RNA sequence: GGGAACGACUCGAGUAGAGUCGAAAACUCUGCUAAUUCGUUAGCAGAGGUACACUGGGACGGGUCGGGAGGGGGAUACUCGCGGUGCCAAGAAGAAUCCAGCAAGCACAUUAUUCGUAAUGUGCAAUCCAUCUAUUCACUUCGGUGAAUAGAUGGAAAAAGAAACAACAACAACAAC
Reactivity to 2A3 in 0.01 (KOAc 150mM, MgCl2 10mM, bicine 150mM(pH8.5), 24C), signal-to-noise 2, nucleotides 027 to 126: c000u000c000u000g010c000u000a040a000u070u080c190g060u050u010a000g000c000a000g000a000g020g000u040a020c100a030c030u070g150g030g220a060c070g130g030g090u250c090g000g080g090a300g040g030g010g040g020a020u070a050c030u030c040g000c020g000g020u060g020c010c000a010a010g020a030a010g000a010a020u000c010c010a010g060c050a080a040g020c000a010c000a020u000u010a020u080u080c160g030u030a000a010u010g000u010g000c000a000a010
Reactivity to DMS in 0.01 (KOAc 150mM, MgCl2 10mM, bicine 150mM(pH8.5), 24C), signal-to-noise 1, nucleotides 027 to 126: c000u000c000u000g010c000u000a000a020u000u000c140g000u000u000a010g050c000a010g000a000g000g030u000a010c100a130c020u000g010g000g020a090c300g000g010g000u000c100g000g020g000a120g010g000g000g000g000a030u000a000c090u000c020g020c080g000g030u000g000c100c010a030a020g020a050a060g010a080a120u000c020c060a050g020c210a030a160g000c010a000c000a000u000u000a040u010u040c190g020u010a000a000u000g000u000g000c000a020a030
This 177-nucleotide RNA was probed chemically with 2A3 and DMS. In probing experiments dimethyl sulfate is read out at A N1 and C N3, which are open when not base-paired. The 2A3 profile rests on 1,716 reads.